Notes:
Chemical mapping of a 177-nucleotide RNA with 2A3 and DMS. Reactivities are given for positions 27 through 126. Source: RMDB library M2PK90, as collected in RNAgym. For 2A3 the reverse transcriptase was SuperScript II with manganese.
RNA sequence: GGGAACGACUCGAGUAGAGUCGAAAAGCCGUGCACGAGAGGGAGCAGAAAAUGCAGAGCUAUCCCGUCGUUUCGCUAAACAAAUGCGAAACGACAAAUUGCGUUACAUACGCAAUCCUCUAAUGAACUGGGAAUCAAAGUUCGCUUUGAUUCCCAGAAAAGAAACAACAACAACAAC
Reactivity to 2A3 in 0.01 (KOAc 150mM, MgCl2 10mM, bicine 150mM(pH8.5), 24C), signal-to-noise 2, nucleotides 027 to 126: g000c010c010g030u020g090c040a030c080g090a080g030a000g060g020g050a030g040c030a010g180a070a190a020a030u090g000c000a000g000a010g080c020u050a070u070c020c020c040g000u010c000g000u000u000u000c000g000c010u050a130a210a210c070a050a080a030u130g040c000g000a000a000a000c000g000a000c000a000a090a000u020u000g000c020g000u000u090a180c060a110u210a030c020g000c000a000a000u000c020c000u120c010u050a060a100u120g010a060a030
Reactivity to DMS in 0.01 (KOAc 150mM, MgCl2 10mM, bicine 150mM(pH8.5), 24C), signal-to-noise 1, nucleotides 027 to 126: g010c000c050g020u010g020c050a010c220g000a030g030a120g000g000g000a060g020c050a040g010a050a070a090a080u000g020c020a060g020a110g000c020u010a140u000c010c000c010g010u000c000g010u000u000u000c000g000c000u030a020a060a080c300a100a080a070u000g010c010g000a000a000a000c000g010a010c000a010a040a100u000u000g000c010g010u000u010a210c210a030u000a040c000g000c000a000a010u000c050c010u000c030u000a090a050u010g010a120a110